[RMDB]
Overview
Chemical mapping of a 207-nucleotide RNA with 2A3. Values are in units of 0.01, from 0 to 300, in steps of 10. The 2A3 profile rests on 963 reads. Values cover nucleotides 27 to 156.
RNA sequence: GGGAACGACUCGAGUAGAGUCGAAAAUUCUGCCAUUCGUGGCAGAAAAAAAACCUUUGUGCGAGUAGUUACCUGAACUACGUCUAACUCGCCCAUUGGGCGAGGACGACGCAGGUAAGCUCGCACUCUGGUAAAAAUUCGAUGUUCGCAUCGAAAAAACAUCAACCACUUUCGAGUGGUUGAUGUUAAAAGAAACAACAACAACAAC
Reactivity to 2A3 in 0.01 (KOAc 150mM, MgCl2 10mM, bicine 150mM(pH8.5), 24C), signal-to-noise 2, nucleotides 027 to 156: u020u000c010u010g000c000c000a030u030u070c270g100u030g000g000c000a000g000a000a000a000a000a000a000a000a000c000c000u000u000u000g000u000g000c020g020a020g010u090a080g060u050u020a000c000c000u010g050a100a100c120u180a050c280g000u000c020u020a130a070c010u000c020g000c040c000c050a300u230u300g010g000g000c010g000a020g000g010a010c070g000a000c000g000c000a000g000g040u000a010a000g000c000u000c020g010c000a010c000u000c000u000g010g000u100a090a070a030a010a070u020u030c020g000a000u010g030u060u110c230g050c210a010u060c080g000a070a000a000a060